[RMDB]
RNA sequence: GGGAACGACUCGAGUAGAGUCGAAAAGAUAUGGACGAACUCCCCACCAUUAAUGCUCUUUGAUCCACCGGAAUGUCGGAAACGACAUUCCGGUGGGGAGAGCAAUUAAUGAGGUUCGUCCUAAGUCGGUACGAAUAAACUUCGGUUUAUUCGUACCAAAAGAAACAACAACAACAAC
Reactivity to DMS in 0.01 (KOAc 150mM, MgCl2 10mM, bicine 150mM(pH8.5), 24C), signal-to-noise 1, nucleotides 027 to 126: g000a150u010a200u000g010g010a000c010g000a020a000c040u000c160c020c040c040a300c250c020a000u000u010a020a010u000g010c000u000c000u000u000u020g010a070u000c000c000a010c000c000g000g010a030a020u000g000u000c010g010g000a050a090a140c030g040a030c010a030u020u000c000c000g070g000u010g000g010g030g000a020g000a030g000c000a000a000u000u000a010a000u000g000a090g030g010u000u010c010g010u000c000c000u000a000a120g060u040c200
Reactivity to 2A3 in 0.01 (KOAc 150mM, MgCl2 10mM, bicine 150mM(pH8.5), 24C), signal-to-noise 1, nucleotides 027 to 126: g100a120u280a260u300g000g020a000c000g030a030a030c020u150c060c000c070c000a000c010c030a000u000u010a010a010u010g000c010u060c040u300u300u040g070a100u090c020c000a010c010c030g020g010a030a030u030g010u030c040g000g080a130a080a020c000g000a020c000a000u010u010c000c000g000g000u010g010g000g010g000a010g000a000g000c050a070a000u010u010a010a010u010g010a010g000g020u020u020c030g000u000c020c000u060a100a030g300u240c190
Chemical mapping of a 177-nucleotide RNA with DMS and 2A3. For DMS the reverse transcriptase was MarathonRT. The 2A3 profile rests on 1,548 reads.